[RMDB]
RNA sequence: GGGAACGACUCGAGUAGAGUCGAAAAACCUCUUUACCGUUUGAGCAAUGGGGGGACGCAGGAGGAUAGGGUAAGCGCGCUGUUGGAUAUGCGCGUCCAAGCAGUUAGGCUGCAAACGAGGCAAAUCGAUGUAGUUGCAUUUCGAUGCAACUACAUCAAAAGAAACAACAACAACAAC
Reactivity to 2A3 in 0.01 (KOAc 150mM, MgCl2 10mM, bicine 150mM(pH8.5), 24C), signal-to-noise 2, nucleotides 027 to 126: a010c030c000u050c000u040u040u050a140c040c040g050u040u050u070g090a040g020c080a090a120u140g000g000g040g030g000g020a030c060g000c040a020g010g030a030g010g020a030u120a050g050g000g010u050a050a010g000c020g000c000g000c060u060g010u170u130g020g060a040u040a020u230g010c030g000c010g000u000c000c000a010a030g020c000a000g000u040u140a110g080g050c000u020g020c020a010a020a010c010g010a030g030g000c060a080a050a050u130c100
Reactivity to DMS in 0.01 (KOAc 150mM, MgCl2 10mM, bicine 150mM(pH8.5), 24C), signal-to-noise 4, nucleotides 027 to 126: a090c030c010u010c110u010u010u010a110c080c060g010u010u010u010g000a080g020c070a080a080u010g020g010g010g010g000g000a100c130g020c080a070g000g000a090g010g020a090u000a070g020g010g020u000a050a100g010c020g010c020g030c020u010g020u020u010g020g010a110u000a050u010g010c020g010c060g000u000c030c050a060a140g010c020a020g000u000u000a130g030g000c030u000g020c040a060a070a090c130g000a090g010g000c110a020a070a100u010c160